[RMDB]
Source: RMDB library OK2TRN, as collected in RNAgym. This 177-nucleotide RNA was probed chemically with DMS and 2A3. DMS adducts were read by reverse transcription with MarathonRT. Values cover nucleotides 27 to 126. For DMS, 3,262 sequencing reads were counted. The RNA was probed in 150 mM KOAc, 10 mM MgCl2 and 150 mM bicine (pH 8.5) at 24 C.
RNA sequence: GGGAACGACUCGAGUAGAGUCGAAAAGUAGAACUAGGCGCCUCGAGGGUAUACAUAUUUCAUUAGUGAAUAUAACGGACCCAGCAGGGGACAUUCUCUGGUGAACUGCAACCAAUCGGCCAAGCAGUCUACACACGUUAUUCGUAACGUGUGUAGAAAAAGAAACAACAACAACAAC
Reactivity to DMS in 0.01 (KOAc 150mM, MgCl2 10mM, bicine 150mM(pH8.5), 24C), signal-to-noise 4, nucleotides 027 to 126: g010u000a100g000a090a280c100u020a100g020g020c100g020c020c010u000c040g020a170g000g020g020u010a060u020a140c130a050u000a010u000u000u010c020a110u000u000a160g010u010g010a010a010u000a030u010a110a170c140g010g020a040c010c010c010a050g050c250a150g010g010g010g010a050c060a060u000u000c010u010c020u010g000g000u000g010a040a110c040u000g010c010a150a050c040c030a030a110u010c120g000g020c060c080a090a100g020c040a030g000
Reactivity to 2A3 in 0.01 (KOAc 150mM, MgCl2 10mM, bicine 150mM(pH8.5), 24C), signal-to-noise 3, nucleotides 027 to 126: g040u070a030g040a170a020c070u030a080g060g050c070g050c070c000u010c030g020a040g010g020g030u040a040u050a110c070a040u050a040u070u110u040c050a080u050u220a050g090u050g110a020a010u050a010u000a120a080c130g130g010a030c000c000c010a010g050c070a060g060g020g000g010a000c000a020u090u040c010u000c010u050g000g000u010g050a040a020c010u000g000c000a010a000c000c000a020a140u160c070g060g000c000c020a020a030g010c010a010g020